[RMDB]
RNA sequence: GGGAACGACUCGAGUAGAGUCGAAAAUCAGCUGCAGGAUUUUAUGUUGUCGUAGAUCAAACCUGACUUUAUUCACUCGGAACGCACUGGGACAUCUGGUAUUGUCCAUCUGCGUUUUGAAUUUUGCUUCUGGAAGGUUUUUCGAAACCUUCCAGAAAAAAGAAACAACAACAACAAC
Reactivity to 2A3 in 0.01 (KOAc 150mM, MgCl2 10mM, bicine 150mM(pH8.5), 24C), signal-to-noise 1, nucleotides 027 to 126: u030c030a010g000c000u100g040c000a070g050g140a180u020u130u000u170a190u090g100u050u140g000u180c050g060u190a030g030a210u090c040a020a060a130c000c040u000g040a130c030u110u140u070a120u130u030c090a010c040u050c000g000g000a000a000c000g010c000a020c060u180g000g000g030a010c000a020u000c210u240g140g050u110a090u120u050g000u090c000c000a040u000c010u000g010c010g000u000u000u000u000g010a070a000u010u000u110u150g090c020
Reactivity to DMS in 0.01 (KOAc 150mM, MgCl2 10mM, bicine 150mM(pH8.5), 24C), signal-to-noise 2, nucleotides 027 to 126: u010c000a100g000c030u010g000c000a030g010g020a010u020u050u020u000a060u020g000u000u000g030u010c050g010u000a070g000a020u000c110a060a050a100c060c030u010g000a080c050u000u050u070a080u070u000c060a140c240u000c080g010g000a030a000c010g000c000a000c190u000g020g010g010a010c000a030u040c140u020g000g040u040a060u010u000g000u000c000c000a150u000c280u000g000c000g040u000u010u060u000g040a000a150u020u030u020u020g000c300